[RMDB]
Overview:
The data come from the RNA Mapping Database (RMDB), library OK2TRN. An RNA of 177 nucleotides, treated with DMS and 2A3 and read out base by base. Reactivities are rounded to 0.1 and cut off at 0 and 3. As a SHAPE reagent, 2A3 marks flexible, mostly unpaired nucleotides at the ribose 2'-OH. For 2A3 the reverse transcriptase was SuperScript II with manganese. The reactions ran in a buffer of 150 mM KOAc, 10 mM MgCl2 and 150 mM bicine (pH 8.5), at 24 C.
RNA sequence: GGGAACGACUCGAGUAGAGUCGAAAAGGCGCGAUCAUCGUACGAUCUCUGGUACGAUGGCCAGUCGUACAGUGCGCAUCAGUCUGUACGUACUAGAGUACGCGCGGAUCGGCCCGAGGCCAUGCGCGCGGGCCUAUGGUUUCGACCAUAGGCCCGCAAAAGAAACAACAACAACAAC
Reactivity to DMS in 0.01 (KOAc 150mM, MgCl2 10mM, bicine 150mM(pH8.5), 24C), signal-to-noise 9, nucleotides 027 to 126: g010g010c010g020c030g020a130u010c010a020u000c010g020u000a020c010g010a110u000c150u000c150u010g000g010u000a010c010g010a030u000g010g010c060c030a060g010u000c000g000u000a020c020a040g020u010g010c040g020c140a080u000c180a130g010u000c010u000g000u000a020c010g010u010a010c010u000a080g010a160g020u010a070c020g010c010g020c010g010g000a070u010c110g010g000c010c010c070g000a130g010g010c050c040a060u000g010c050g020c080
Reactivity to 2A3 in 0.01 (KOAc 150mM, MgCl2 10mM, bicine 150mM(pH8.5), 24C), signal-to-noise 7, nucleotides 027 to 126: g080g000c020g010c020g050a060u060c010a010u010c000g010u000a010c030g060a220u060c100u010c090u230g090g000u010a010c000g010a020u010g020g010c010c000a010g010u010c000g000u010a020c000a040g050u080g190c030g000c050a190u130c050a090g110u000c010u010g000u010a010c010g030u050a020c010u050a070g070a030g090u060a040c020g000c000g000c050g010g040a110u080c060g050g000c010c030c050g060a130g010g000c040c020a030u100g030c040g000c040